An RNA of 177 nucleotides, treated with 2A3 and DMS and read out base by base. DMS adducts were read by reverse transcription with MarathonRT. The RNA was probed in 150 mM KOAc, 10 mM MgCl2 and 150 mM bicine (pH 8.5) at 24 C.
[RMDB]
RNA sequence: GGGAACGACUCGAGUAGAGUCGAAAAUAGUACUCUGGUCAAUGCGGAUUGCCUGUGGCGGUGUUGGCUGGACGACCGAGUGUCGGCGGAUACCUCCGGGCAGCUUGUCUGCUUGCAUGCUCCCAUGGAGCUAUGAACAGUUCGCUGUUCAUAGCUCAAAAGAAACAACAACAACAAC
Reactivity to 2A3 in 0.01 (KOAc 150mM, MgCl2 10mM, bicine 150mM(pH8.5), 24C), signal-to-noise 2, nucleotides 027 to 126: u110a000g090u070a050c060u010c030u110g100g010u110c040a020a060u170g000c000g020g010a090u170u070g000c000c000u100g120u260g120g000c080g000g020u040g000u050u060g200g030c030u040g160g060a020c030g000a070c050c150g110a130g100u150g020u050c020g000g010c000g030g000a020u020a040c020c000u020c000c010g000g010g000c000a000g000c080u060u140g030u000c020u060g040c010u000u050g010c000a050u070g030c000u020c040c000c000a000u140g090
Reactivity to DMS in 0.01 (KOAc 150mM, MgCl2 10mM, bicine 150mM(pH8.5), 24C), signal-to-noise 1, nucleotides 027 to 126: u020a120g000u000a080c100u000c080u000g010g000u010c030a040a070u000g030c000g020g000a040u010u000g000c010c010u020g020u040g040g000c130g000g000u000g040u000u000g000g050c020u000g010g040a050c040g000a110c140c160g000a110g010u010g000u000c010g000g010c030g010g000a020u000a060c050c010u010c020c040g000g010g020c010a040g000c140u000u030g020u010c010u000g000c000u000u020g000c110a080u010g000c050u000c000c000c010a150u020g000